[RMDB]
Structure probing data (2A3 and DMS) for a 177-nucleotide construct. For DMS the reverse transcriptase was MarathonRT. Values cover nucleotides 27 to 126. High DMS reactivity at an A or C suggests that its Watson-Crick edge is free.
RNA sequence: GGGAACGACUCGAGUAGAGUCGAAAAUCUAGAGGCCGGGGUCGAGGGACGCUGGAGCCGUGAUGGGGAGGAGCUGCCGGUCAUCUGCCAGAGCAGCUCAGGCCACAUGCAUGCCCUGGUCCUUCCAGACCUUGCUACUUUUCGAAGUAGCAAGGUCAAAAGAAACAACAACAACAAC
Reactivity to 2A3 in 0.01 (KOAc 150mM, MgCl2 10mM, bicine 150mM(pH8.5), 24C), signal-to-noise 1, nucleotides 027 to 126: u010c000u010a050g010a080g180g000c000c000g000g010g000g030u080c050g080a050g130g040g000a070c050g000c240u160g090g040a100g110c090c030g040u030g030a060u030g010g000g020g000a080g020g000a000g000c000u010g040c040c000g020g030u100c030a140u110c090u160g000c010c000a070g030a040g000c010a000g000c000u020c000a000g060g030c010c000a000c010a010u110g080c020a010u090g000c010c010c000u010g000g040u010c010c000u020u020c020c010a010
Reactivity to DMS in 0.01 (KOAc 150mM, MgCl2 10mM, bicine 150mM(pH8.5), 24C), signal-to-noise 1, nucleotides 027 to 126: u000c040u010a120g010a140g020g010c040c030g020g020g030g000u000c090g020a070g030g020g040a030c070g000c010u000g000g010a140g010c050c060g070u010g010a050u020g000g010g010g020a210g010g010a010g020c010u000g000c010c000g020g010u020c170a080u000c280u000g000c020c020a150g020a190g000c000a000g010c010u000c010a020g010g000c000c000a050c010a000u000g020c020a070u010g040c020c000c010u000g010g010u000c000c010u000u000c030c080a170